Annotation:
Source: RMDB library OK2TRN, as collected in RNAgym. The record gives the reactivity of an RNA of 177 nucleotides to DMS and 2A3. DMS adducts were read by reverse transcription with MarathonRT. Values cover nucleotides 27 to 126.

[RMDB]
RNA sequence: GGGAACGACUCGAGUAGAGUCGAAAACAAAUCAAGACGUAGUGUCAAAGCUGAUGACAGGUGAAGAUAAGUUCUUCAAUUAUUUCUGCUGGAGAAGUGAGUAUUCAGAUGGAGAACUAAUUGACUGCUCUGAAAGUCAAUUCGUUGACUUUCAGAGAAAAGAAACAACAACAACAAC
Reactivity to DMS in 0.01 (KOAc 150mM, MgCl2 10mM, bicine 150mM(pH8.5), 24C), signal-to-noise 7, nucleotides 027 to 126: c060a090a120a080u020c110a080a090g000a090c070g010u000a070g010u010g000u000c050a090a110a160g010c090u010g010a070u000g010a080c070a050g000g010u000g000a070a110g010a060u010a060a100g000u000u000c020u000u000c010a020a070u000u000a050u010u000u010c050u000g020c020u000g000g000a050g000a080a150g020u000g010a090g000u010a100u000u010c050a030g010a150u000g020g010a040g000a010a020c050u000a030a050u000u000g000a070c210u000g000
Reactivity to 2A3 in 0.01 (KOAc 150mM, MgCl2 10mM, bicine 150mM(pH8.5), 24C), signal-to-noise 7, nucleotides 027 to 126: c010a000a090a060u180c060a090a060g080a040c050g100u110a040g090u100g030u150c000a070a070a030g050c050u080g040a080u090g040a070c040a050g010g090u070g080a050a030g030a080u080a120a040g050u060u000c000u020u000c000a020a050u080u040a060u040u120u020c040u060g080c020u030g030g060a070g020a070a050g190u300g160a020g040u060a070u030u040c010a010g060a140u100g080g010a030g000a020a010c010u020a040a010u030u020g040a030c040u050g020